[RMDB]
An RNA of 207 nucleotides, treated with 2A3 and read out base by base. The data come from the RNA Mapping Database (RMDB), library RNAMAK. The RNA was probed in 150 mM KOAc, 10 mM MgCl2 and 150 mM bicine (pH 8.5) at 24 C. Reactivities are rounded to 0.1 and cut off at 0 and 3. Reactivities are given for positions 27 through 156.
RNA sequence: GGGAACGACUCGAGUAGAGUCGAAAAGAGGAUAUUCGUAUCCUCCGAAAGGGGUCGUCGACCAAAGAGGGACAUGCUCUGAAGCCUCCACGGAGCAACAGCCUCCCCACCUUUGGCGACGACGGAGGCACCCAGAUGUUCGGAAUUCGUUCCGAAAGAGGAAAUAUGACUUCGGUCAUAUUUCCUCAAAAGAAACAACAACAACAAC
Reactivity to 2A3 in 0.01 (KOAc 150mM, MgCl2 10mM, bicine 150mM(pH8.5), 24C), signal-to-noise 1, nucleotides 027 to 156: g020a030g010g000a040u080a030u030u200c170g020u050a000u040c020c000u040c000c000g160a180a130a060g260g000g100g020u010c000g000u010c020g050a300c030c040a050a010a000g220a270g000g010g000a000c050a050u020g000c000u000c010u000g000a080a000g010c020c000u000c010c010a020c020g000g000a010g040c010a030a140c040a050g080c000c080u070c000c000c000c000a300c030c000u030u000u000g000g000c020g000a000c000g000a000c000g000g000a000g010g000c000a020c010c000c000a060g080a200u180g060u060u040c020g000g060a020a010u100u060c200g080u080u000c000c000g020a000a050a000